[RMDB]
RNA sequence: GGGAACGACUCGAGUAGAGUCGAAAAGGGGUCACGGGAGGAGGUCUAGAGCGAAGAACUAUACUGAAGCCUCCACGGUAUAGGGAGCUCUAGAAACCUCCUUUGAUCGUGACGGAGGCACCCAAAACCAAAGUGAGUGUUCGCACUCACUUUGGAACGGUAAAUUAAUCUUCGGAUUAAUUUACCGAAAAGAAACAACAACAACAAC
Reactivity to 2A3 in 0.01 (KOAc 150mM, MgCl2 10mM, bicine 150mM(pH8.5), 24C), signal-to-noise 2, nucleotides 027 to 156: g030g000g130g030u010c010a010c000g010g000g000a010g000g000a000g010g000u020c000u000a000g000a010g010c020g140a300a000g000a000a020c010u000a000u010a000c000u040g050a100a010g020c000c000u000c000c000a010c020g000g000u000a000u000a000g000g000g020a010g030c010u020c000u050a100g020a100a010a020c000c010u010c000c010u070u060u010g000a000u000c000g000u000g000a000c010g000g000a000g000g000c000a000c000c010c000a000a060a050a050c000c000a000a000a000g000u000g010a000g000u010g030u120u180c260g010c110a000c000u000c000a000c040u000u000u010g000g000a000a030